[RMDB]
RNA sequence: GGGAACGACUCGAGUAGAGUCGAAAAGAUUACAGUCUUUGUUACUGUCAACCUUGCAAAAGUUUGCACUUAUGCCAUCUUUGCUUACUCACCACAGCUUACACUUGUGUUUCCGGAAGUGAAGAUGUUAUCGUAUUCUUCGGAAUACGAAAAAGAAACAACAACAACAAC
Reactivity to DMS in 0.01 (KOAc 150mM, MgCl2 10mM, bicine 150mM(pH8.5), 24C), signal-to-noise 9, nucleotides 027 to 129: g000a100u040u020a000c010a040g020u010c060u040u060u030g030u050u030a050c010u010g030u040c140a040a060c020c010u000u000g030c060a040a060a120a100g000u020u010u040g030c070a090c120u060u040a070u060g000c140c000a000u010c000u020u020u020g020c020u000u000a080c010u000c130a100c300c000a020c030a030g000c050u010u100a130c260a110c200u040u000g020u000g000u010u000u000c130c180g000g010a040a030g020u030g010a020a020g020a010u000g010u030u030a060
Reactivity to 2A3 in 0.01 (KOAc 150mM, MgCl2 10mM, bicine 150mM(pH8.5), 24C), signal-to-noise 9, nucleotides 027 to 129: g030a010u130u140a010c000a010g020u000c090u110u300u290g140u250u120a010c000u000g010u020c030a060a070c010c000u020u070g020c020a010a040a080a160g070u080u110u120g070c070a050c070u170u100a070u220g020c010c000a000u000c000u010u010u010g000c000u020u050a190c020u050c080a040c030c000a010c010a030g030c020u190u220a070c080a040c090u110u130g020u020g010u050u110u050c070c060g030g020a010a010g000u000g010a000a000g000a000u000g010u040u030a040

Notes: The record gives the reactivity of an RNA of 170 nucleotides to DMS and 2A3. The reactions ran in a buffer of 150 mM KOAc, 10 mM MgCl2 and 150 mM bicine (pH 8.5), at 24 C. DMS adducts were read by reverse transcription with MarathonRT. The 2A3 profile rests on 90,328 reads.